The record gives the reactivity of an RNA of 177 nucleotides to DMS and 2A3. 2A3 adducts were read by reverse transcription with SuperScript II with manganese. The 2A3 profile rests on 1,818 reads. It was measured as part of the RMDB library M2PK50.
RNA sequence: GGGAACGACUCGAGUAGAGUCGAAAAAUCCUGCCCUUCGGGGCAGGAUGCAGCUUCGCUCUUGUGAGCGCGACUUAAGAGGAAUCCCAACGCGCAGAAGCACUAUUUCUCAGUUCGCUGAGAAAAACCCUCAUUCCUUUUUCGAAAGGAAUGAGGGAAAAGAAACAACAACAACAAC
Reactivity to DMS in 0.01 (KOAc 150mM, MgCl2 10mM, bicine 150mM(pH8.5), 24C), signal-to-noise 1, nucleotides 027 to 126: a000u000c000c000u000g000c000c000c000u020u000c110g050g040g010g010c000a000g010g020a000u000g040c120a070g000c070u000u010c020g010c020u000c010u000u010g000u010g040a040g030c010g020c020g010a050c030u000u010a050a140g000a060g000g010a080a130u000c010c000c010a070a140c140g000c060g020c050a160g010a070a110g020c130a040c110u000a150u010u000u000c010u000c010a020g000u000u000c200g000c000u020g000a030g000a030a030a000a130a080
Reactivity to 2A3 in 0.01 (KOAc 150mM, MgCl2 10mM, bicine 150mM(pH8.5), 24C), signal-to-noise 2, nucleotides 027 to 126: a000u020c000c000u000g000c000c000c010u060u040c260g050g020g010g000c000a010g000g000a000u000g000c000a040g020c020u090u100c010g020c010u010c040u240u300g160u170g240a020g000c020g010c010g040a050c030u090u130a090a030g030a020g120g060a060a070u030c010c020c000a000a060c050g060c040g000c030a050g060a120a020g020c010a010c050u100a190u020u030u000c010u000c010a010g030u090u070c170g030c060u000g010a000g000a020a000a000a000a000